[RMDB]
RNA sequence: GGGAACGACUCGAGUAGAGUCGAAAAAUGCUUACGAGGAAUCAGUGUUUUCUGCAGCCAUCUCUGGGGCUGGUUCCAGCAUGGUUUUUGAGAAUGAUUUUUCUGAGUUUGAUAGUACUCAGAACAACACCUCUACCUAGUUCGCUAGGUAGAGGUGAAAAGAAACAACAACAACAAC
Reactivity to 2A3 in 0.01 (KOAc 150mM, MgCl2 10mM, bicine 150mM(pH8.5), 24C), signal-to-noise 1, nucleotides 027 to 126: a000u060g030c020u090u060a100c070g050a050g100g010a030a000u000c020a010g040u030g030u160u010u090u130c060u150g080c100a040g090c030c010a080u120c110u000c020u130g040g030g000g010c020u020g030g020u030u000c000c010a010g000c010a000u030g090g030u000u020u080u200u160g090a080g060a150a070u130g100a130u020u010u000u200u000c010u010g020a020g010u000u030u130g180a180u130a080g060u030a050c000u030c000a000g010a000a010c010a010a010
Reactivity to DMS in 0.01 (KOAc 150mM, MgCl2 10mM, bicine 150mM(pH8.5), 24C), signal-to-noise 2, nucleotides 027 to 126: a030u000g020c000u000u000a080c140g010a180g010g030a030a060u010c030a030g010u000g010u010u000u000u000c050u000g000c050a080g020c060c070a040u010c070u000c060u020g030g010g010g010c040u010g000g010u000u010c010c010a060g020c300a040u000g000g020u010u000u000u010u030g000a120g010a120a130u010g000a060u010u000u000u000u000c000u000g000a030g010u000u000u010g010a200u020a070g030u000a010c000u010c000a020g000a000a050c300a060a100

Notes
This 177-nucleotide RNA was probed chemically with 2A3 and DMS. The DMS profile rests on 1,801 reads. 2A3 adducts were read by reverse transcription with SuperScript II with manganese. Source: RMDB library OK2TRN, as collected in RNAgym. In probing experiments dimethyl sulfate is read out at A N1 and C N3, which are open when not base-paired. As a SHAPE reagent, 2A3 marks flexible, mostly unpaired nucleotides at the ribose 2'-OH. Conditions: 150 mM KOAc, 10 mM MgCl2 and 150 mM bicine (pH 8.5), 24 C.